[RMDB]
RNA sequence: GGGAACGACUCGAGUAGAGUCGAAAAUACACCGAAAACUAUUGAGGUACACGAUGAUGUGGUGAUUCUCCUGUUGCAUUACGGCGGCUUUAAGCACAAGACUGUAUCAGGUGAAAUAAGCAUUAAGCGCGGAACGCUUGUACGCUACGAGGUGAAACGACCCUUUCGUAUUCGUACGAAAGGGUCGAAAAGAAACAACAACAACAAC
Reactivity to 2A3 in 0.01 (KOAc 150mM, MgCl2 10mM, bicine 150mM(pH8.5), 24C), signal-to-noise 1, nucleotides 027 to 156: u100a000c060a000c000c060g010a090a000a020a000c030u100a050u110u200g110a040g010g060u040a010c010a010c150g070a060u130g030a030u060g010u030g000g070u040g020a110u060u040c010u000c060c000u050g060u070u010g000c040a030u000u100a040c020g000g000c070g000g040c070u230u150u240a060a010g000c070a010c010a100a080g060a030c060u090g010u040a040u070c000a030g000g040u020g050a000a060a000u170a010a000g000c020a020u060u090a050a030g000c000g000c020g130g010a060a000c030g030c030u090u020g010u040a000c050g000c060u020a020c030g050a010g050g000u070g050a090a020a000
Conditions: 150 mM KOAc, 10 mM MgCl2 and 150 mM bicine (pH 8.5), 24 C. Structure probing data (2A3) for a 207-nucleotide construct. Source: RMDB library OK3TST, as collected in RNAgym. 2A3 adducts were read by reverse transcription with SuperScript II with manganese.